[RMDB]
Structure probing data (DMS and 2A3) for a 177-nucleotide construct. Reactivities are given for positions 27 through 126. The 2A3 profile rests on 3,144 reads.
RNA sequence: GGGAACGACUCGAGUAGAGUCGAAAACGCAGAUCUGCUGCACCUGUACACCGCGUACCAGCGCGCAGCCACGCCGGCCGACAAGGCCGCCGCGCUCGCCGUGCUCGACGCGGAGAUCGACCGCCGCGAUGGACGCAUUUUUCGAAAUGCGUCCAUCAAAAGAAACAACAACAACAAC
Reactivity to DMS in 0.01 (KOAc 150mM, MgCl2 10mM, bicine 150mM(pH8.5), 24C), signal-to-noise 3, nucleotides 027 to 126: c200g010c010a050g020a050u000c090u000g000c000u000g000c030a230c080c050u000g010u000a130c300a070c010c020g010c010g000u010a130c100c090a040g000c010g030c010g020c060a040g000c030c050a080c050g000c290c000g000g000c000c000g010a140c280a060a130g000g000c000c000g010c100c030g000c300g020c020u000c130g050c060c130g070u020g020c020u000c110g000a020c030g000c010g000g000a050g000a150u020c020g010a090c150c100g010c000c130g010c040
Reactivity to 2A3 in 0.01 (KOAc 150mM, MgCl2 10mM, bicine 150mM(pH8.5), 24C), signal-to-noise 2, nucleotides 027 to 126: c040g000c010a010g000a070u030c050u190g030c000u000g010c010a010c000c010u020g020u020a030c030a020c030c010g030c000g030u080a300c050c030a030g010c010g020c000g000c030a010g020c030c040a040c040g030c080c000g000g010c000c010g110a160c160a210a060g020g000c010c010g000c000c010g010c020g000c020u050c050g020c090c030g010u000g000c000u000c010g030a010c000g000c000g010g000a000g000a010u050c020g040a090c000c110g000c020c010g020c040